[RMDB]
Source: RMDB library OK2TRN, as collected in RNAgym.
This 177-nucleotide RNA was probed chemically with DMS and 2A3.
Conditions: 150 mM KOAc, 10 mM MgCl2 and 150 mM bicine (pH 8.5), 24 C.
The DMS profile rests on 2,196 reads.
For DMS the reverse transcriptase was MarathonRT.
RNA sequence: GGGAACGACUCGAGUAGAGUCGAAAAUAUGGGAAUUGUGGACAAUGAACUACACGAGCUCAGUGAGGCAAACCCUUUAGACCAUCCACAGCUACCUCAUGCUCAGUCUAUUGCCGACGAUUCGGAGGCAAGUGCUGGGGUUCGCCCCAGCACUUGCAAAAGAAACAACAACAACAAC
Reactivity to DMS in 0.01 (KOAc 150mM, MgCl2 10mM, bicine 150mM(pH8.5), 24C), signal-to-noise 3, nucleotides 027 to 126: u010a070u000g010g020g030a040a070u000u010g020u000g020g010a050c080a080a070u010g010a040a060c020u010a110c200a100c170g020a060g010c050u000c100a080g020u010g020a090g000g010c060a030a070a130c040c020c030u000u000u000a080g020a090c070c040a090u000c020c030a050c100a090g000c060u000a070c010c020u000c070a040u000g000c020u000c050a050g000u000c030u000a070u000u000g010c020c020g010a060c110g000a100u000u000c010g000g000a250g010
Reactivity to 2A3 in 0.01 (KOAc 150mM, MgCl2 10mM, bicine 150mM(pH8.5), 24C), signal-to-noise 1, nucleotides 027 to 126: u290a100u110g090g040g000a070a030u030u050g000u020g020g010a010c010a080a050u080g060a080a040c040u100a010c090a030c120g020a010g000c010u030c130a060g070u000g010a010g050g000c030a050a060a200c010c000c000u050u090u020a040g020a040c000c050a060u020c000c020a050c020a030g000c030u040a030c010c000u000c000a030u110g000c000u000c020a000g030u000c010u060a090u010u110g000c020c000g090a050c020g030a090u070u010c020g020g070a040g150